Record summary:
The record gives the reactivity of an RNA of 170 nucleotides to DMS and 2A3. 2A3 adducts were read by reverse transcription with SuperScript II with manganese.

RNA sequence: GGGAACGACUCGAGUAGAGUCGAAAAGUCCGCAGUCUCAUCCUUUCUUACCUGAUGGCCGGCAUGGUCCCAGCCUCCUCGCUGGCGCCGGCUGGGCAACAUUCCGAGGGGACCGUCCCUCGGCAAUUAAGCCAUUAGUUCGCUAAUGGCAAAAGAAACAACAACAACAAC
Reactivity to DMS in 0.01 (KOAc 150mM, MgCl2 10mM, bicine 150mM(pH8.5), 24C), signal-to-noise 3, nucleotides 027 to 129: g030u030c000c000g050c080a070g010u000c000u000c000a070u040c070c050u030u030u040c070u000u010a090c060c040u060g050a120u040g020g000c050c010g000g000c020a070u050g010g040u010c300c000c000a070g010c000c070u040c080c060u030c150g000c040u030g010g020c210g000c020c020g000g000c000u000g000g000g000c040a080a070c170a110u000u060c010c010g040a040g050g020g000g000a160c170c280g050u090c000c030c000u000c030g010g010c170a020a010u040u030a050a120
Reactivity to 2A3 in 0.01 (KOAc 150mM, MgCl2 10mM, bicine 150mM(pH8.5), 24C), signal-to-noise 9, nucleotides 027 to 129: g040u010c000c000g020c040a000g040u000c010u000c010a130u080c010c030u070u120u080c020u080u100a140c010c030u080g070a110u140g100g020c010c010g020g000c010a110u150g040g020u120c000c020c000a000g010c000c030u110c020c020u110c080g000c020u030g010g000c030g000c010c000g020g010c010u030g010g000g010c020a070a030c020a130u080u040c000c000g000a000g010g030g010g040a110c030c050g250u260c000c000c000u000c000g000g000c000a000a050u090u100a080a010